Background: Structure probing data (DMS and 2A3) for a 177-nucleotide construct.
RNA sequence: GGGAACGACUCGAGUAGAGUCGAAAACUAAAUUUAUUCCAUAGUUUCCUAUAAGUGGAUAAGUCAUAGUAACUAUUUGUCCAUAAUAAGUUGCAUCUGUCAAUAGUUCUCCAUACCCAGCCAUUGACAUAUGAGCGCUGUUCGCAGCGCUCAUAUGAAAAGAAACAACAACAACAAC
Reactivity to DMS in 0.01 (KOAc 150mM, MgCl2 10mM, bicine 150mM(pH8.5), 24C), signal-to-noise 1, nucleotides 027 to 126: c070u040a130a150a100u080u080u030a150u030u000c080c090a080u050a090g000u000u000u000c010c020u020a080u080a130a060g030u020g000g000a010u000a000a000g030u010c000a110u000a070g070u090a110a070c020u020a020u020u030u030g060u030c040c000a010u000a000a140u020a080a010g030u000u060g070c060a060u010c030u000g000u010c000a000a160u030a090g000u000u010c050u040c000c090a000u020a060c030c000c000a000g040c030c040a120u020u000g030a290
Reactivity to 2A3 in 0.01 (KOAc 150mM, MgCl2 10mM, bicine 150mM(pH8.5), 24C), signal-to-noise 3, nucleotides 027 to 126: c010u110a000a050a300u180u170u180a110u080u030c000c000a000u030a070g040u020u040u040c020c020u070a040u020a300a000g070u050g030g000a010u010a080a010g000u000c020a090u070a220g010u090a170a000c020u010a030u180u000u070g020u000c000c000a020u030a170a050u000a250a000g160u080u010g010c020a100u060c050u130g050u040c000a020a140u030a080g010u040u000c010u000c020c000a050u100a070c040c020c000a010g050c050c000a100u080u040g000a000